[RMDB]
RNA sequence: GGGAACGACUCGAGUAGAGUCGAAAAGGCAUAUUCGUAUGCCAUCGUGGGGUCUAGCGGGAGCGACCGAAACAGAGGCUGAAGCCUCCACGGCUACCCACCUGUAGGUCGCGAAGAACGCUAGACGGAGGCACCCGUUACCCAGGUUCGCCUGGAACAGCGAAAUAUUAUUCGUAAUAUUUCGCUGAAAAGAAACAACAACAACAAC
Reactivity to DMS in 0.01 (KOAc 150mM, MgCl2 10mM, bicine 150mM(pH8.5), 24C), signal-to-noise 3, nucleotides 027 to 156: g020g000c010a000u000a050u000u000c220g070u000a000u000g020c000c010a030u000c090g030u000g000g020g030g020u000c020u000a030g000c010g030g000g020a120g020c020g010a030c010c000g010a150a180a150c020a050g000a100g020g020c020u010g020a200a150g010c020c020u000c020c030a040c090g010g020c010u000a090c020c010c050a300c030c000u000g010u000a270g000g010u000c030g010c000g010a080a180g010a080a180c020g030c000u000a010g010a050c000g000g010a060g010g000c020a140c050c000c040g000u010u020a120c050c010c030a030g000g020u000u010c240g050c020c000u020g010g010a100a250
Reactivity to 2A3 in 0.01 (KOAc 150mM, MgCl2 10mM, bicine 150mM(pH8.5), 24C), signal-to-noise 2, nucleotides 027 to 156: g010g000c020a010u010a010u060u160c280g120u050a000u010g010c010c000a040u120c080g040u040g000g030g000g020u010c000u000a000g010c010g000g000g000a000g000c000g000a010c010c010g020a130a250a030c010a000g010a020g020g000c010u070g040a220a010g040c010c000u000c010c010a020c000g010g000c010u160a290c030c020c000a030c000c010u000g010u020a030g010g000u010c000g000c000g000a010a010g000a010a000c000g020c000u000a000g000a000c000g010g070a030g000g000c010a050c000c080c020g100u130u140a130c000c000c010a000g010g020u050u050c190g040c090c000u000g000g010a100a040